[RMDB]
RNA sequence: GGGAACGACUCGAGUAGAGUCGAAAAAAUAAUUCAUUGAUAUAUUCAAUUGAAAGUUCAUAAUCUCCAGUCAGAUUAUAUAUUUUAGCUAUGCUCCAUUUAAUCCAAUACUUAGCUUCACUGGCAGAGUCCACUGAUAGUUCGCUAUCAGUGGACUAAAAGAAACAACAACAACAAC
Reactivity to 2A3 in 0.01 (KOAc 150mM, MgCl2 10mM, bicine 150mM(pH8.5), 24C), signal-to-noise 2, nucleotides 027 to 126: a000a000u180a020a030u000u000c000a000u000u000g010a000u120a050u100a210u270u030c000a000a000u070u080g020a000a090a040g020u100u090c050a050u060a250a040u010c120u000c000c000a020g020u110c010a000g040a000u140u190a000u100a000u000a180u200u150u040u200a020g000c030u080a050u070g010c000u040c050c010a100u020u050u050a090a230u300c000c000a040a010u090a110c030u010u000a020g000c000u150u140c110a080c070u010g030g000c000a000g000
Background:
An RNA of 177 nucleotides, treated with 2A3 and read out base by base. Reactivities are given for positions 27 through 126. 2A3 adducts were read by reverse transcription with SuperScript II with manganese. For 2A3, 490 sequencing reads were counted.